[RMDB]
This 177-nucleotide RNA was probed chemically with 2A3 and DMS.

RNA sequence: GGGAACGACUCGAGUAGAGUCGAAAAAGACCCCCAAAAAGUCCCCUCUAAAGGGACACAUCUAAGGACUAUUAUAGUCUAUGAUGAACGACACCAAGAGUUGGCUGAUAGCGACAUGAAAAGGACAAACCCUUUUUAAAUUCGUUUAAAAAGGGUUAAAAGAAACAACAACAACAAC
Reactivity to 2A3 in 0.01 (KOAc 150mM, MgCl2 10mM, bicine 150mM(pH8.5), 24C), signal-to-noise 3, nucleotides 027 to 126: a000g100a030c000c000c000c000c000a110a050a000a020a000g010u010c010c030c020c010u070c100u220a120a060a040g000g010g010a000c000a000c000a000u010c010u040a060a120g020g000a010c020u010a060u300u110a170u220a140g000u000c000u010a060u060g000a010u000g020a040a020c040g070a030c010a010c060c030a050a030g030a030g080u040u040g060g000c010u020g030a030u020a090g050c040g030a020c020a040u130g090a030a060a070a040g070g000a010c030a020
Reactivity to DMS in 0.01 (KOAc 150mM, MgCl2 10mM, bicine 150mM(pH8.5), 24C), signal-to-noise 4, nucleotides 027 to 126: a170g000a170c130c080c010c070c160a050a070a030a100a170g000u000c000c000c020c010u000c220u040a080a180a070g010g000g000a040c020a110c010a010u000c000u010a060a170g000g000a010c020u000a110u010u040a110u010a020g000u000c000u000a300u000g000a000u010g000a120a100c170g000a100c070a070c090c070a070a090g010a060g010u010u010g000g010c080u000g010a090u020a070g000c060g000a040c070a040u010g010a030a060a050a040g010g000a100c070a060

Background:
The reactions ran in a buffer of 150 mM KOAc, 10 mM MgCl2 and 150 mM bicine (pH 8.5), at 24 C. As a SHAPE reagent, 2A3 marks flexible, mostly unpaired nucleotides at the ribose 2'-OH. It was measured as part of the RMDB libraries RFM100 and RFMREP.